[RMDB]
RNA sequence: GGGAACGACUCGAGUAGAGUCGAAAAGAUAUGGACAGGAGCAUCGAUCUGGUCAGUCGGAAACGACUGCCAGGGAGCUCCGUCCUAAGUCAAAACCACCCAGUCAACUUCGGUUGACUGGGUGGAAGAUUGAUAGACUCUUCGGAGUCUAUCAAUCAAAAGAAACAACAACAACAAC
Reactivity to DMS in 0.01 (KOAc 150mM, MgCl2 10mM, bicine 150mM(pH8.5), 24C), signal-to-noise 1, nucleotides 027 to 126: g020a050u000a300u020g000g010a040c000a130g020g020a000g020c010a300u000c090g010a070u010c010u000g010g010u020c040a010g000u000c010g010g000a120a120a110c000g010a010c000u000g000c000c000a020g000g010g000a020g010c010u000c000c000g020u000c000c000u030a020a050g010u020c020a120a050a120a160c000c000a000c000c040c000a010g030u000c000a020a030c010u020u020c170g040g010u000u000g000a010c020u010g010g020g000u000g000g010a000a030
Reactivity to 2A3 in 0.01 (KOAc 150mM, MgCl2 10mM, bicine 150mM(pH8.5), 24C), signal-to-noise 2, nucleotides 027 to 126: g020a030u060a050u080g050g010a020c250a300g150g000a010g010c030a130u300c070g120a080u070c030u020g000g070u300c080a000g000u010c010g050g050a010a050a000c000g000a010c000u000g000c020c010a020g030g010g000a000g030c010u000c010c000g000u020c000c000u000a090a010g030u000c040a000a010a080a080c000c000a000c050c000c010a000g030u010c010a010a010c010u080u150c300g190g010u020u000g000a000c010u000g000g030g000u000g000g010a000a000